The record gives the reactivity of an RNA of 177 nucleotides to 2A3. It was measured as part of the RMDB library RFM100. For 2A3 the reverse transcriptase was SuperScript II with manganese. The reactions ran in a buffer of 150 mM KOAc, 10 mM MgCl2 and 150 mM bicine (pH 8.5), at 24 C. Reactivities are given for positions 27 through 126.

RNA sequence: GGGAACGACUCGAGUAGAGUCGAAAAGCUUCGCCUACCAAGCGUACCAACGCCGCAUUGUAGCAAACGAGGAGUCCAAGGUGGCGCAGCCUCUCGGGCCUCUCAUUUGCUGCGCUGCAGCGCUGGUAGCUAACCGCUGUUUCGACAGCGGUUAGCUAAAAGAAACAACAACAACAAC
Reactivity to 2A3 in 0.01 (KOAc 150mM, MgCl2 10mM, bicine 150mM(pH8.5), 24C), signal-to-noise 1, nucleotides 027 to 126: g010c050u090u040c020g000c000c010u010a040c000c040a050a010g010c000g070u060a010c000c020a030a000c000g000c000c010g000c000a000u010u060g020u030a010g010c000a000a010a020c040g000a000g000g000a000g000u000c000c000a010a050g140g130u170g090g040c170g020c100a050g030c010c000u020c010u010c000g000g000g000c000c000u000c000u020c000a060u000u000u000g000c000u010g000c000g000c000u000g000c000a000g010c000g000c000u000g000g020u000